Chemical mapping of a 177-nucleotide RNA with DMS and 2A3. For DMS, 5,180 sequencing reads were counted. The data come from the RNA Mapping Database (RMDB), library RFMREP. For DMS the reverse transcriptase was MarathonRT. Reactivities are given for positions 27 through 126. The reactions ran in a buffer of 150 mM KOAc, 10 mM MgCl2 and 150 mM bicine (pH 8.5), at 24 C.
[RMDB]
RNA sequence: GGGAACGACUCGAGUAGAGUCGAAAAUACAACGUCACCCAAAGUAGUGAACGUAAUUUAUCGUGAGCUAUCUAUAGAUAUUAUGCUCAUUACUUUGGAGAAGUUGUAAAAGUGAGCUUCGGCUCACCCAAUUGAUACGGUUCGCCGUAUCAAUUGGAAAAGAAACAACAACAACAAC
Reactivity to DMS in 0.01 (KOAc 150mM, MgCl2 10mM, bicine 150mM(pH8.5), 24C), signal-to-noise 4, nucleotides 027 to 126: u000a000c000a000a010c000g020u000c100a190c100c000c000a000a010a000g010u000a010g030u000g000a010a010c000g010u000a010a010u000u020u010a010u000c030g010u000g000a070g010c230u030a080u010c040u010a100u010a130g000a020u010a030u000u000a010u000g000c020u000c010a010u000u000a000c000u000u000u000g000g000a120g020a060a140g000u000u010g000u000a020a080a070a120g000u000g010a010g010c000u000u000c220g030g000c000u000c000a000c000
Reactivity to 2A3 in 0.01 (KOAc 150mM, MgCl2 10mM, bicine 150mM(pH8.5), 24C), signal-to-noise 6, nucleotides 027 to 126: u030a000c000a010a000c010g050u070c060a060c010c010c000a000a010a000g000u010a000g000u000g000a010a010c010g010u000a010a050u060u190u100a030u030c040g020u050g090a040g090c110u180a120u300c040u090a090u130a170g000a000u020a000u030u010a010u020g000c000u000c010a000u000u000a010c000u010u000u020g010g000a010g000a010a010g000u000u010g000u010a040a040a000a020g010u000g000a000g010c020u070u100c280g100g000c000u010c000a000c000